[RMDB]
RNA sequence: GGGAACGACUCGAGUAGAGUCGAAAAGAUAUGGAGUGACCCAGGCAACAGCUUGCGGUCGGAAACGACCGUCAAGACAUGCCUGGUCACUCCUAAGUCAAAAUCGGCAUACUUCGGUAUGCCGAAAUCCAACACACUACUUCGGUAGUGUGUUGGAAAAAGAAACAACAACAACAAC
Reactivity to 2A3 in 0.01 (KOAc 150mM, MgCl2 10mM, bicine 150mM(pH8.5), 24C), signal-to-noise 2, nucleotides 027 to 126: g010a000u000a000u050g000g010a020g000u020g000a010c210c300c240a050g040g000c160a300a160c050a300g030c010u010u000g030c000g000g000u010c000g000g000a000a000a000c010g000a000c060c030g120u160c100a020a010g000a040c030a130u300g010c000c030u000g020g000u010c000a000c000u000c000c000u000a000a000g000u010c020a000a000a000a300u040c000g000g020c010a000u030a030c030u040u100c300g130g010u000a020u030g000c000c000g000a010a000a010
Reactivity to DMS in 0.01 (KOAc 150mM, MgCl2 10mM, bicine 150mM(pH8.5), 24C), signal-to-noise 1, nucleotides 027 to 126: g000a000u000a070u020g040g000a020g000u000g000a010c230c090c100a010g010g040c000a210a100c260a160g000c010u000u010g000c000g000g000u000c020g040g000a000a010a040c010g000a000c000c000g010u010c020a000a000g000a000c000a300u050g000c000c000u010g000g000u000c000a000c000u000c000c000u000a000a040g000u000c000a090a090a100a110u000c000g020g010c010a000u010a000c000u000u010c270g000g000u000a020u000g010c030c000g050a000a040a050